[RMDB]
Annotation
Structure probing data (2A3 and DMS) for a 177-nucleotide construct. For DMS, 3,530 sequencing reads were counted. DMS (dimethyl sulfate) methylates the pairing face of unpaired adenines and cytosines. Values are in units of 0.01, from 0 to 300, in steps of 10. Conditions: 150 mM KOAc, 10 mM MgCl2 and 150 mM bicine (pH 8.5), 24 C. Reactivities are given for positions 27 through 126.

RNA sequence: GGGAACGACUCGAGUAGAGUCGAAAACGAAAAAAACACUGUGGUGGCCAGCAGCGAACUCGGGUAGUCGUCCGGAGCCAUCACGUUGAAGCCGUUCCGCUUGAGCUGAUCGGUGGCGGUGGUGGCCUAGCAAUUAGCUUUUCGAAGCUAAUUGCUAAAAAGAAACAACAACAACAAC
Reactivity to 2A3 in 0.01 (KOAc 150mM, MgCl2 10mM, bicine 150mM(pH8.5), 24C), signal-to-noise 1, nucleotides 027 to 126: c000g150a000a030a000a030a020a020a030c080a000c080u080g000u030g030g050u000g000g000c040c030a010g000c020a010g000c050g030a070a050c020u020c060g180g000g170u150a030g040u010c030g040u000c020c010g020g030a010g000c000c010a010u000c010a000c000g000u030u090g080a050a010g010c000c000g010u030u020c010c010g040c030u100u240g120a100g030c020u050g040a040u050c020g010g040u050g030g000c040g000g000u000g000g020u010g010g000c000c000
Reactivity to DMS in 0.01 (KOAc 150mM, MgCl2 10mM, bicine 150mM(pH8.5), 24C), signal-to-noise 3, nucleotides 027 to 126: c080g020a010a000a080a070a070a090a100c060a030c070u010g020u000g000g010u000g020g000c020c010a120g000c120a100g010c030g000a080a040c020u000c040g010g000g010u010a030g020u010c020g020u010c050c030g020g010a190g010c000c000a000u000c000a010c000g010u010u000g000a140a140g000c010c010g010u000u000c020c060g010c030u010u010g010a160g010c050u000g000a040u000c030g000g000u010g010g030c090g010g020u000g010g000u000g000g010c030c100